Notes:
Structure probing data (DMS and 2A3) for a 177-nucleotide construct. For 2A3, 42,109 sequencing reads were counted. For DMS the reverse transcriptase was MarathonRT. The reactions ran in a buffer of 150 mM KOAc, 10 mM MgCl2 and 150 mM bicine (pH 8.5), at 24 C.
RNA sequence: GGGAACGACUCGAGUAGAGUCGAAAAAUCUCUGUCUUUCCAUGAUCUGAGAGGCCCAAUGUUCACCUAGUAGUGAAAUUUACCAGCAUCUUUAAUGUAACUAUUGUGCACAUUGUGCUAGGGGAGAGUUAACUACAUGAUUCGUCAUGUAGUUAACAAAAGAAACAACAACAACAAC
Reactivity to DMS in 0.01 (KOAc 150mM, MgCl2 10mM, bicine 150mM(pH8.5), 24C), signal-to-noise 9, nucleotides 027 to 126: a100u000c010u000c010u010g010u000c020u000u000u010c100c080a110u010g010a090u000c100u000g000a120g010a080g000g000c010c030c010a030a030u000g000u000u000c010a010c020c250u010a040g000u000a030g010u000g000a090a140a080u000u000u010a150c130c090a080g010c090a050u010c120u000u000u000a040a030u000g000u010a200a040c030u000a030u000u000g010u000g000c070a030c010a030u000u000g010u000g000c020u000a090g010g000g000g000a080g010a150
Reactivity to 2A3 in 0.01 (KOAc 150mM, MgCl2 10mM, bicine 150mM(pH8.5), 24C), signal-to-noise 9, nucleotides 027 to 126: a000u010c020u000c010u020g070u020c020u040u120u020c050c040a120u150g050a100u090c070u150g050a040g020a060g180g000c000c020c000a000a030u050g000u000u010c000a010c020c050u080a040g010u010a010g000u060g090a080a040a040u100u080u050a110c060c050a040g100c040a130u080c100u120u240u130a090a030u080g030u040a010a020c010u020a040u120u110g010u020g000c020a010c010a030u010u040g010u020g010c010u030a050g000g010g010g010a060g010a010